[RMDB]
RNA sequence: GGGAACGACUCGAGUAGAGUCGAAAACAUGGUUCUUGGUAUCGCUGGCACGCUGUGGCUAGACACUCGGCUCAAUCGUGUUCAGGCUGCCCCGCCGCAGCACAUUGCUAAGACAUCCGGCACGAACGACGAUCGUGAUCUUCGGAUCACGAUCGUCAAAAGAAACAACAACAACAAC
Reactivity to DMS in 0.01 (KOAc 150mM, MgCl2 10mM, bicine 150mM(pH8.5), 24C), signal-to-noise 1, nucleotides 027 to 126: c030a060u040g020g020u000u000c050u000u000g000g020u000a060u000c140g010c030u000g010g010c030a090c140g020c090u030g050u020g000g020c000u000a070g010a070c060a080c070u000c080g010g000c030u040c050a040a070u020c100g010u010g000u000u000c110a140g010g000c010u000g000c000c030c040c140g000c020c010g030c090a040g040c010a120c130a050u010u000g000c010u000a010a090g010a130c100a100u010c000c100g040g010c120a090c130g020a070a120c020
Reactivity to 2A3 in 0.01 (KOAc 150mM, MgCl2 10mM, bicine 150mM(pH8.5), 24C), signal-to-noise 1, nucleotides 027 to 126: c050a080u080g010g010u010u110c020u020u060g050g000u030a030u190c030g030c070u010g020g000c030a000c020g000c030u070g030u110g070g020c010u020a060g040a050c060a020c040u050c020g000g070c030u010c050a010a070u090c060g010u040g070u150u210c060a050g000g100c000u070g010c000c000c000c030g050c000c020g050c010a000g020c000a000c010a110u050u200g000c030u030a040a000g010a020c010a060u040c030c010g070g070c030a000c050g070a080a000c090